Structure probing data (2A3 and DMS) for a 207-nucleotide construct.
[RMDB]
RNA sequence: GGGAACGACUCGAGUAGAGUCGAAAAUUGCGGGAAACUCCUUAGAGCUCAAGCUACCGCUGCUGCCCAGAGAUGGGCUGUGGCACCAGGUUAACGACCUCGGGUAUGGUAACAACGCCUGAGAUUGGACAAUCCGCAGCCAAGCUCCCUCAUGGGACUAUACGGUAAUGUUCGCAUUACCGUAUAGAAAAGAAACAACAACAACAAC
Reactivity to 2A3 in 0.01 (KOAc 150mM, MgCl2 10mM, bicine 150mM(pH8.5), 24C), signal-to-noise 4, nucleotides 027 to 156: u080u000g000c010g000g000g020a020a110a020c010u020c010c020u120u110a160g040a090g190c000u000c010a010a010g000c000u010a000c000c000g000c000u000g000c010u020g000c000c000c000a000g010a000g000a030u020g000g000g000c010u020g000u010g010g020c000a000c000c000a000g020g000u000u000a000a000c000g000a000c000c020u120c170g000g000g000u160a300u190g000g000u000a000a010c000a000a000c030g000c000c000u000g000a000g000a010u050u060g000g000a000c000a000a030u000c000c000g000c000a000g010c010c000a030a030g030c010u010c000c030c000u100c100a170u280g010g020g020a010
Reactivity to DMS in 0.01 (KOAc 150mM, MgCl2 10mM, bicine 150mM(pH8.5), 24C), signal-to-noise 2, nucleotides 027 to 156: u000u010g000c000g040g040g000a090a070a140c240u000c010c020u010u010a060g020a170g010c020u000c020a040a060g020c010u000a040c030c020g000c010u010g000c020u000g000c000c020c000a040g000a230g000a210u000g020g010g020c010u010g020u010g010g020c020a060c040c020a050g010g010u020u000a050a090c110g020a120c010c020u010c150g010g000g000u000a040u020g010g020u010a020a050c090a050a130c040g020c010c000u020g010a030g010a050u000u000g010g010a040c060a050a300u010c000c000g010c020a060g000c080c040a090a190g010c060u000c000c010c010u010c080a120u020g020g010g010a120
The DMS profile rests on 4,305 reads. The RNA was probed in 150 mM KOAc, 10 mM MgCl2 and 150 mM bicine (pH 8.5) at 24 C. High 2A3 reactivity points to a flexible backbone, as in loops and unpaired stretches. 2A3 adducts were read by reverse transcription with SuperScript II with manganese. For 2A3, 7,900 sequencing reads were counted.